[RMDB]
RNA sequence: GGGAACGACUCGAGUAGAGUCGAAAACCCGUUUUGUUCGCAAAACGGGACUCAUCUUUGCUUGGCAGCAUAGCAGGUGUUGGCUGGACUGCUGGCUUAUCGUUGGAGGCAGUUUCGACUGCCUCAAUACCUGCUUGUACUUCGGUACAAGCAGGUAAAAAGAAACAACAACAACAAC
Reactivity to DMS in 0.01 (KOAc 150mM, MgCl2 10mM, bicine 150mM(pH8.5), 24C), signal-to-noise 1, nucleotides 027 to 126: c000c000c010g000u000u000u000u000g020u000u030c200g010c030a000a000a000a010c000g010g000g010a110c040u010c030a070u030c060u020u010u000g010c000u000u000g070g030c020a060g030c120a100u000a010g010c050a040g000g020u010g010u010u010g020g030c030u000g020g000a170c060u000g010c000u000g000g020c000u000u010a050u010c230g000u000u000g000g000a030g000g020c000a010g000u000u000u020c180g000a020c000u000g000c000c000u000c000a030a080